[RMDB]
Conditions: 150 mM KOAc, 10 mM MgCl2 and 150 mM bicine (pH 8.5), 24 C.
Chemical mapping of a 177-nucleotide RNA with 2A3 and DMS.
Reactivities are given for positions 27 through 126.
RNA sequence: GGGAACGACUCGAGUAGAGUCGAAAAGAUAUGGAUGUUCAAGCGCGCGAAGAACUCGCUCGGAAACGAGCGAGGGAGCGUGACUUGAGACAUCCUAAGUCAAAACAUGAGCGUUCGCGCUCAUGAAUCACGUGAUAAUCUUCGGAUUAUCACGUGAAAAAGAAACAACAACAACAAC
Reactivity to 2A3 in 0.01 (KOAc 150mM, MgCl2 10mM, bicine 150mM(pH8.5), 24C), signal-to-noise 2, nucleotides 027 to 126: g050a030u080a090u210g010g000a000u010g010u000u010c010a000a010g000c000g000c000g020c000g190a300a020g010a080a050c000u000c010g000c000u010c000g060g000a010a090a090c000g000a010g000c010g000a010g000g000g000a030g020c000g030u000g300a300c010u000u000g010a020g050a020c000a000u000c000c000u010a170a010g060u030c030a060a030a030a180c000a000u020g000a000g000c010g020u040u240c300g010c030g010c120u000c000a000u020g000a000a090
Reactivity to DMS in 0.01 (KOAc 150mM, MgCl2 10mM, bicine 150mM(pH8.5), 24C), signal-to-noise 2, nucleotides 027 to 126: g000a030u000a300u000g000g000a000u020g000u000u010c000a000a000g000c050g000c000g030c020g040a170a170g000a110a210c000u010c000g020c000u000c000g010g000a160a150a220c000g010a010g020c000g000a010g000g000g010a040g010c000g030u000g010a100c010u010u000g000a040g020a000c000a010u000c000c000u020a050a130g000u020c050a110a100a100a180c000a000u000g000a020g000c000g030u010u050c300g030c020g020c000u000c010a010u000g000a140a160